[RMDB]
Source information: The data come from the RNA Mapping Database (RMDB), library TTRDES. This 177-nucleotide RNA was probed chemically with 2A3 and DMS. For 2A3, 1,418 sequencing reads were counted. The reactions ran in a buffer of 150 mM KOAc, 10 mM MgCl2 and 150 mM bicine (pH 8.5), at 24 C.
RNA sequence: GGGAACGACUCGAGUAGAGUCGAAAAAAAAAAGAUAUGGAAAUGAACUACGCUGCCAUAGGCGAAGAACUAUAUUCGGAAACGAAUAUAGGGAGCCUAGGCGGAGCGCAUUUCCUAAGUCAAAAAACAUCAUUCCUUUGUUCGCAAAGGAAUGAUGAAAAGAAACAACAACAACAAC
Reactivity to 2A3 in 0.01 (KOAc 150mM, MgCl2 10mM, bicine 150mM(pH8.5), 24C), signal-to-noise 1, nucleotides 027 to 126: a000a000a160a120a000a040g080a020u150a090u220g000g000a000a030a020u020g000a050a020c070u090a020c230g000c070u120g030c020c100a300u120a000g000g090c040g230a300a000g080a070a010c000u000a000u000a000u010u000c010g000g030a030a050a050c010g000a060a000u000a000u000a000g050g020g040a000g000c000c000u000a010g030g040c000g010g040a000g000c030g030c020a010u050u000u000c020c000u060a120a000g060u080c060a120a000a000a000a120a000
Reactivity to DMS in 0.01 (KOAc 150mM, MgCl2 10mM, bicine 150mM(pH8.5), 24C), signal-to-noise 1, nucleotides 027 to 126: a020a020a120a120a160a150g000a000u000a300u000g000g020a040a040a030u000g000a100a040c040u030a090c140g030c020u000g000c050c080a300u040a000g020g010c040g000a000a100g010a040a190c010u000a020u000a010u000u000c000g000g000a050a080a070c000g000a020a010u000a010u000a000g020g040g010a070g020c020c000u010a000g000g010c020g000g000a020g010c300g000c020a010u000u000u000c000c010u000a100a110g020u010c020a000a030a070a070a040a190